[RMDB]
RNA sequence: GGGAACGACUCGAGUAGAGUCGAAAAGGCAGGACUUACCAAGUCCGGGGGCCGAUGAGGGUUGGCUCAAAGUAGGGUUUUGACUUGAAAACUCAAGCUGUGACCCCAAAACGAUGGAGGUAAAUGAAAAAUCCAUCUGCCUUCGGGCAGAUGGAAACUAACUACACAGGUUCGCCUGUGUAGUUAGAAAAGAAACAACAACAACAAC
Reactivity to 2A3 in 0.01 (KOAc 150mM, MgCl2 10mM, bicine 150mM(pH8.5), 24C), signal-to-noise 2, nucleotides 027 to 156: g070g020c070a030g030g010a010c030u070u140a160c130c100a090a040g040u000c030c000g000g010g000g040g010c050c090g030a040u120g000a100g000g010g050u060u080g020g010c010u010c060a070a070a030g080u080a050g010g030g000u040u020u090u100g060a100c020u050u050g030a080a050a100a100c070u020c000a010a010g010c020u040g040u120g100a070c000c010c000c040a010a040a040a020c050g070a040u050g020g020a030g050g050u040a050a090a080u160g080a080a050a030a000a010u020c000c000a010u000c020u000g000c010c000u030u070c150g050g000g000c010a010g000a000u000g000g040a000a000a000
Reactivity to DMS in 0.01 (KOAc 150mM, MgCl2 10mM, bicine 150mM(pH8.5), 24C), signal-to-noise 1, nucleotides 027 to 156: g030g040c010a080g000g000a070c010u000u000a180c160c060a140a190g000u010c010c000g000g040g000g050g000c100c120g000a130u000g000a120g000g030g020u000u000g060g000c010u000c070a050a030a130g010u000a060g030g000g050u000u020u020u010g030a030c030u000u000g020a040a040a110a130c170u000c000a010a030g020c010u030g030u000g030a090c010c010c010c010a050a050a100a080c080g000a050u000g030g000a050g010g010u010a100a040a100u000g000a060a080a080a100a110u000c000c000a000u020c000u000g010c000c010u000u000c300g020g010g030c000a030g050a060u000g000g000a000a010a060
Structure probing data (2A3 and DMS) for a 207-nucleotide construct. Source: RMDB library M2RFPK, as collected in RNAgym. The RNA was probed in 150 mM KOAc, 10 mM MgCl2 and 150 mM bicine (pH 8.5) at 24 C. Reactivities are rounded to 0.1 and cut off at 0 and 3. 2A3 adducts were read by reverse transcription with SuperScript II with manganese.